[RMDB]
RNA sequence: GGGAACGACUCGAGUAGAGUCGAAAACGCGCGAACGUACGCGGGAACGCGCGAAAAAGCGCAUGCGCGAAAAAGGCCGGAAAGCCGGCCAGCGCGUUCGCGCGCAUGCGCCGCGUACGGAAGCGCGAUGGAUCACUAGUUUCGACUAGUGAUCCAUAAAAGAAACAACAACAACAAC
Reactivity to 2A3 in 0.01 (KOAc 150mM, MgCl2 10mM, bicine 150mM(pH8.5), 24C), signal-to-noise 6, nucleotides 027 to 126: c010g020c000g000c000g050a160a010c000g000u000a000c000g010c000g000g000g000a030a000c010g020c000g000c000g080a160a070a020a040a010g050c000g000c010a020u040g020c030g000c000g270a060a020a010a020a030g010g000c020c010g030g020a280a160a050g300c000c000g000g000c000c000a010g000c000g000c000g000u010u030c130g000c000g000c000g000c060a000u050g010c020g000c000c000g000c000g000u000a000c010g000g000a040a010g000c000g000c000g000
Reactivity to DMS in 0.01 (KOAc 150mM, MgCl2 10mM, bicine 150mM(pH8.5), 24C), signal-to-noise 3, nucleotides 027 to 126: c010g000c000g020c000g000a180a200c000g010u000a010c010g000c020g000g000g000a080a060c010g000c000g020c020g000a020a080a080a090a040g010c010g030c030a010u010g010c030g040c020g010a140a030a010a220a070g000g000c000c010g000g000a210a160a180g010c020c000g000g040c000c000a030g020c000g010c000g020u000u000c130g000c040g010c000g000c030a000u000g010c030g000c000c000g000c000g020u000a000c000g000g000a090a290g000c000g000c000g000